[RMDB]
RNA sequence: GGGAACGACUCGAGUAGAGUCGAAAAGAGGGCCUCCUCCCUCGCCUUCGAGCCGGGUCUUGCAUCGGGUUGGCUCAUCCUGAGACCGGGGAGCUUCGACGAUCUCUUGUCUCUCCUGAAGGAGGAAAUAGUGUAGGCUUCGGCCUACACAAAAGAAACAACAACAACAAC
Reactivity to DMS in 0.01 (KOAc 150mM, MgCl2 10mM, bicine 150mM(pH8.5), 24C), signal-to-noise 5, nucleotides 027 to 129: g020a040g010g010g010c090c040u060c040c040u040c020c020c040u010c070g020c040c030u040u030c050g020a120g000c000c040g030g020g020u020c070u000u000g080c100a100u000c000g010g010g050u000u000g060g000c060u000c030a110u060c050c020u030g020a050g030a030c060c040g020g030g000g000a030g000c010u050u070c140g000a120c130g020a140u010c030u030c040u040u000g020u000c050u020c020u050c040c030u000g040a080a040g070g010a000g030g020a150a080a040u080a120
Reactivity to 2A3 in 0.01 (KOAc 150mM, MgCl2 10mM, bicine 150mM(pH8.5), 24C), signal-to-noise 8, nucleotides 027 to 129: g050a030g010g010g010c000c050u050c010c010u080c000c000c010u010c010g020c000c000u060u100c050g030a010g000c000c000g050g000g040u040c060u060u150g080c020a090u080c050g060g040g000u030u050g020g000c010u020c010a060u090c000c040u020g020a010g020a030c020c030g000g000g000g000a010g010c000u110u100c070g130a110c050g040a120u020c000u000c000u030u030g010u010c010u000c000u020c020c020u070g060a130a040g040g020a010g000g060a060a020a050u220a050